[RMDB]
RNA sequence: GGGAACGACUCGAGUAGAGUCGAAAACGAUCAGUACGUUCGCGUACUGAUCGAAGCUACUGGAGACAGUAGCAAGUCUAAGACCUUGUUAGGCGGAAACAAGGAAAAAUGGAGGAAGGCCAGACCUCCAUACUUAGACAACCGCCAACUGGCCAACGGACUGGAAAAUGUUCGCAUUUUCCAGUCCAAAAGAAACAACAACAACAAC
Reactivity to 2A3 in 0.01 (KOAc 150mM, MgCl2 10mM, bicine 150mM(pH8.5), 24C), signal-to-noise 1, nucleotides 027 to 156: c010g010a010u010c000a000g000u000a010c000g040u050u110c240g000c000g080u000a000c000u010g000a000u000c000g000a000a000g000c000u000a010c000u000g030g000a060g010a020c000a000g000u000a000g000c000a010a020g010u000c000u000a010a040g010a190c000c000u000u000g020u010u020a140g000g220c070g050g060a100a000a000c000a000a010g070g020a010a180a000a000a070u040g030g010a000g000g020a070a280g000g000c000c000a000g010a220c010c000u000c000c000a000u010a010c000u010u000a000g000a000c030a060a020c130c040g060c060c010a020a020c010u000g010g000c000c010a000a010c060
The data come from the RNA Mapping Database (RMDB), library OK3TST. Structure probing data (2A3) for a 207-nucleotide construct. The RNA was probed in 150 mM KOAc, 10 mM MgCl2 and 150 mM bicine (pH 8.5) at 24 C. Reactivities are given for positions 27 through 156.